[RMDB]
RNA sequence: GGGAACGACUCGAGUAGAGUCGAAAAGAUAUGGAAUUGUGGAAGCCCAAUCUAUGUCGGAAACGACAUAGGAGGAACUACUUCCUCAAUUCCUAAGUCAAAAGCCCAUAGGUUCGCCUAUGGGCAACCAUCGAAUUAAGUUCGCUUAAUUCGAUGGAAAAGAAACAACAACAACAAC
Reactivity to 2A3 in 0.01 (KOAc 150mM, MgCl2 10mM, bicine 150mM(pH8.5), 24C), signal-to-noise 4, nucleotides 027 to 126: g000a000u040a020u100g000g000a000a010u010u000g010u020g010g000a010a030g040c030c090c030a020a010u030c000u010a010u000g010u000c010g030g020a050a030a040c010g000a000c000a000u000a000g010g030a020g030g010a120a090c140u170a080c000u300u000c010c000u020c000a000a000u000u010c010c000u010a070a010g020u010c020a000a040a150a230g010c010c000c000a010u010a010g110g030u040u090c300g130c100c000u010a000u000g000g000g010c000a000a010
Reactivity to DMS in 0.01 (KOAc 150mM, MgCl2 10mM, bicine 150mM(pH8.5), 24C), signal-to-noise 5, nucleotides 027 to 126: g010a010u000a300u000g000g000a000a020u000u000g000u000g010g020a010a010g010c220c070c030a040a140u000c010u000a000u000g000u000c010g010g000a070a090a160c010g000a000c000a000u000a010g010g000a300g020g010a100a080c140u010a180c010u000u000c010c000u000c000a010a010u000u000c000c000u000a020a070g000u010c020a100a110a180a120g000c000c000c000a000u010a000g000g010u000u020c270g020c010c000u000a000u000g000g000g020c000a000a010